[RMDB]
RNA sequence: GGGAACGACUCGAGUAGAGUCGAAAAUCGAUCACACACACGAGAUCACGAGUUCUCACGAACUCGUGAACGAUCACACUCACACACGAACGAACGUACGUACACGAUCACGUUCGAUCGAACGUACACGUGAGAGAUCACGAACGAACUCUCGUUCGCACUUCAUCGUGUUCGCACGAUGAAGUGCAAAAGAAACAACAACAACAAC
Reactivity to 2A3 in 0.01 (KOAc 150mM, MgCl2 10mM, bicine 150mM(pH8.5), 24C), signal-to-noise 4, nucleotides 027 to 156: u080c030g090a070u150c040a040c010a020c020a010c010a010c170g030a020g020a070u060c010a010c000g000a010g020u000u000c090u040c040a070c150g000a000a000c000u000c000g010u010g000a000a020c050g000a000u010c010a040c000a040c100u020c000a000c000a010c010a010c090g040a220a030c040g000a060a010c040g070u020a010c020g010u090a050c180a030c100g080a040u060c010a010c160g160u190u170c120g010a000u000c020g000a010a000c010g000u020a010c020a010c070g000u000g000a010g000a000g000a030u040c020a030c100g050a110a010c040g000a070a030c080u010c000u000c060g030u070u050c050